[RMDB]
RNA sequence: GGGAACGACUCGAGUAGAGUCGAAAAGUUUGUGGAGAAGUCAAAGGAAAACGGCAUGGACGUUUUCCGUGUCUUUGACGCUUUGAACGAUCCGCGCAACAUGGAACGCGCUAUGCAAGCGGUGAAAACUUUGUAGGCCUUUCGAGGCCUACAAAGUAAAAGAAACAACAACAACAAC
Reactivity to DMS in 0.01 (KOAc 150mM, MgCl2 10mM, bicine 150mM(pH8.5), 24C), signal-to-noise 2, nucleotides 027 to 126: g030u000u010u010g010u000g010g010a270g010a100a150g000u000c020a010a030a070g000g010a010a060a020a000c040g000g000c020a050u000g030g020a080c300g000u000u020u020u000c010c020g030u000g030u000c010u010u000u010g000a300c080g000c070u000u000u000g000a050a040c050g010a300u000c020c000g010c020g000c190a060a080c040a090u010g020g010a110a140c160g030c130g010c030u030a040u010g020c110a060a190g000c000g040g000u010g000a060a010a060

This 177-nucleotide RNA was probed chemically with DMS. It was measured as part of the RMDB library OK2TST. The RNA was probed in 150 mM KOAc, 10 mM MgCl2 and 150 mM bicine (pH 8.5) at 24 C.